[RMDB]
RNA sequence: GGGAACGACUCGAGUAGAGUCGAAAAGUCGCAUCAUGCCCUCCGUAACGACAGGUAUCAGCGAUACAAGCCUUGUUGGUUAAUGUAAGUCAGUACCGGUUCCGGCAAUAAAUCCUCACAUGAUUCAGAGUAGUACGUGAUUCGUCACGUACUACUCAAAAGAAACAACAACAACAAC
Reactivity to 2A3 in 0.01 (KOAc 150mM, MgCl2 10mM, bicine 150mM(pH8.5), 24C), signal-to-noise 3, nucleotides 027 to 126: g020u000c030g040c080a050u020c010a030u110g020c010c000c020u040c020c020g020u030a030a020c040g100a060c050a110g000g010u020a030u080c030a010g000c010g030a020u020a160c030a090a000g000c020c010u170u160g260u170u170g040g010u000u090a120a030u120g020u040a030a030g020u050c060a010g000u010a030c020c000g020g000u020u020c010c030g000g000c010a010a010u090a130a090a040u020c000c000u080c010a030c030a080u110g010a080u130u090c030a010
Reactivity to DMS in 0.01 (KOAc 150mM, MgCl2 10mM, bicine 150mM(pH8.5), 24C), signal-to-noise 4, nucleotides 027 to 126: g010u010c080g030c110a050u000c090a050u010g000c030c000c030u000c020c030g010u010a070a050c100g010a120c070a100g020g010u000a040u000c120a150g040c090g000a120u000a030c070a080a140g010c020c010u000u010g030u010u010g010g020u000u000a060a110u000g030u000a050a180g020u000c040a110g000u000a050c030c020g010g010u000u010c050c050g020g010c210a050a040u010a040a060a080u000c010c020u000c060a080c100a060u000g010a060u000u000c120a130